[RMDB]
RNA sequence: GGGAACGACUCGAGUAGAGUCGAAAAGAAAGAAAUCAAAGCGGAUUCGAGAGACUAGCAAUAUCCGUAUAGUCUAAUCGUUAGAUCGAAUAACUCGUUCUUGAUCUAACUGAGGGAUGAGUAGAAAGGGAAACUUAGUGUUCGCACUAAGUUUCCCAAAAGAAACAACAACAACAAC
Reactivity to 2A3 in 0.01 (KOAc 150mM, MgCl2 10mM, bicine 150mM(pH8.5), 24C), signal-to-noise 1, nucleotides 027 to 126: g060a020a010a000g100a000a070a000u140c090a080a050a000g040c000g010g010a000u020u000c020g080a040g000a000g060a170c020u080a090g000c030a120a050u000a050u200c010c000g030u030a020u040a010g040u000c000u000a070a190u040c000g000u000u000a010g070a040u000c010g080a000a000u060a070a050c030u000c160g010u100u000c000u020u150g000a000u000c000u000a030a020c000u000g030a000g100g080g000a080u080g110a000g080u220a080g020a110a140a090
Reactivity to DMS in 0.01 (KOAc 150mM, MgCl2 10mM, bicine 150mM(pH8.5), 24C), signal-to-noise 1, nucleotides 027 to 126: g020a090a060a010g000a050a060a080u050c020a110a140a120g020c060g000g030a050u000u000c090g000a100g000a040g020a080c110u000a110g000c100a060a160u050a000u020c060c060g070u000a070u000a040g000u000c010u000a010a040u080c040g000u050u000a030g000a070u000c000g000a080a050u020a110a130c130u040c300g020u000u030c090u000u000g000a060u000c000u000a020a000c000u000g030a020g020g000g000a000u000g000a090g040u010a100g000a070a080a050
An RNA of 177 nucleotides, treated with 2A3 and DMS and read out base by base. The data come from the RNA Mapping Database (RMDB), library OK1LIB. For DMS the reverse transcriptase was MarathonRT.